[RMDB]
RNA sequence: GGGAACGACUCGAGUAGAGUCGAAAAUUGGGUAGGGUGUGCCGCUUUAUUGUUGUCGGCGUGUAGUAGUGAGCCUGUUCAGCAGGCGACAGCGGCGCACGUAGCGCCAGGUUUAAAAGCGUCGAUAGACCUAAUAGGUGUUCGCACCUAUUAGGUCAAAAGAAACAACAACAACAAC
Reactivity to 2A3 in 0.01 (KOAc 150mM, MgCl2 10mM, bicine 150mM(pH8.5), 24C), signal-to-noise 3, nucleotides 027 to 126: u090u040g040g000g040u110a110g040g060g000u030g000u030g020c010c030g020c040u100u190u110a200u090u190g100u060u090g000u000c010g000g020c010g000u040g010u030a080g020u000a020g030u020g070a020g010c010c010u000g010u070u080c050a150g040c000a000g040g010c000g000a010c010a010g060c000g020g000c010g000c000a000c010g020u010a010g000c000g000c000c010a030g070g020u000u160u120a030a060a000a010g020c010g010u000c010g000a000u020a080
Reactivity to DMS in 0.01 (KOAc 150mM, MgCl2 10mM, bicine 150mM(pH8.5), 24C), signal-to-noise 6, nucleotides 027 to 126: u010u000g010g010g030u000a070g020g020g030u010g010u000g010c030c010g020c040u000u010u000a090u020u000g000u000u000g010u000c010g020g000c000g020u000g010u010a090g010u010a050g010u010g010a290g010c010c000u000g010u010u020c240a190g000c010a020g000g000c000g010a050c120a100g010c030g010g000c000g010c000a050c120g010u010a070g010c060g010c010c010a090g000g000u000u000u010a040a050a080a250g010c020g010u000c010g000a060u000a130